[RMDB]
Chemical mapping of a 177-nucleotide RNA with 2A3 and DMS. The 2A3 profile rests on 16,551 reads. It was measured as part of the RMDB library TTRDEL. Conditions: 150 mM KOAc, 10 mM MgCl2 and 150 mM bicine (pH 8.5), 24 C.
RNA sequence: GGGAACGACUCGAGUAGAGUCGAAAAGAUAUGGAGCCUUGAGCCUUGGAUUUACGAAUAUGUCGGAAACGACAUACUAGUUGUCAGGCUUUGGGCUCCUAAGUCAAAAGUCUCCUUCGGGAGACAACUUAUUAAGAUGGUUCGCCAUCUUAAUAAGAAAAGAAACAACAACAACAAC
Reactivity to 2A3 in 0.01 (KOAc 150mM, MgCl2 10mM, bicine 150mM(pH8.5), 24C), signal-to-noise 5, nucleotides 027 to 126: g010a010u060a030u160g000g010a000g000c000c020u010u010g020a010g000c020c020u090u230g210g010a100u300u300u290a020c000g010a050a010u010a000u020g000u000c010g010g010a050a070a060c010g000a010c000a000u000a000c000u010a000g010u000u030g050u050c050a010g000g040c000u000u000u000g000g000g000c000u000c010c000u010a000a000g000u010c000a000a020a020a080g000u000c000u010c010c000u030u110c270g150g000g000a000g000a000c000a000a000
Reactivity to DMS in 0.01 (KOAc 150mM, MgCl2 10mM, bicine 150mM(pH8.5), 24C), signal-to-noise 7, nucleotides 027 to 126: g010a030u000a300u010g000g000a010g020c000c000u000u000g000a010g010c010c000u010u010g030g020a030u010u010u000a010c000g000a080a170u000a000u000g010u000c000g010g000a130a070a240c010g000a020c000a010u000a000c010u000a300g000u000u000g010u000c000a030g010g010c000u000u000u000g000g010g010c000u000c000c000u000a010a050g010u000c030a080a090a130a130g000u000c000u000c000c000u000u010c200g010g000g000a010g010a000c000a020a030